Record summary:
An RNA of 177 nucleotides, treated with 2A3 and DMS and read out base by base. As a SHAPE reagent, 2A3 marks flexible, mostly unpaired nucleotides at the ribose 2'-OH. High DMS reactivity at an A or C suggests that its Watson-Crick edge is free. 2A3 adducts were read by reverse transcription with SuperScript II with manganese. The RNA was probed in 150 mM KOAc, 10 mM MgCl2 and 150 mM bicine (pH 8.5) at 24 C. Reactivities are rounded to 0.1 and cut off at 0 and 3.
[RMDB]
RNA sequence: GGGAACGACUCGAGUAGAGUCGAAAAUGAAAGUAGUCUCCUGCAGCGUCUGGGGUUUCCGUUGCAGUCCUCGGAACCAGGACCUCGGCGUGGCCUACCGAGUUAUGGCGACGAAGGCCGUGAAAAACUCUUGUUAUUACUUCGGUAAUAACAAGAGAAAAGAAACAACAACAACAAC
Reactivity to 2A3 in 0.01 (KOAc 150mM, MgCl2 10mM, bicine 150mM(pH8.5), 24C), signal-to-noise 3, nucleotides 027 to 126: u140g030a040a050a010g080u110a020g030u020c010u010c030c020u040g040c040a070g030c010g040u020c030u070g020g000g150g000u030u120u010c040c020g030u040u080g030c070a030g060u090c000c020u000c000g030g020a030a030c020c010a010g020g030a020c000c010u010c000g010g000c010g030u050g000g010c000c010u010a020c010c010g000a000g000u070u130a140u140g060g000c060g000a040c030g030a070a030g020g000c020c030g010u130g050a090a080a010a040a030
Reactivity to DMS in 0.01 (KOAc 150mM, MgCl2 10mM, bicine 150mM(pH8.5), 24C), signal-to-noise 6, nucleotides 027 to 126: u010g010a100a090a120g020u000a070g000u000c020u000c020c010u010g010c090a080g020c090g020u000c040u000g020g000g000g000u010u010u000c050c030g000u000u000g010c070a130g010u000c040c020u000c040g010g000a060a060c050c030a150g000g000a050c200c010u000c010g010g000c020g010u000g010g000c010c020u010a080c010c010g010a050g010u000u010a100u010g010g000c040g010a130c090g010a080a070g010g010c020c020g020u010g010a040a070a060a110a100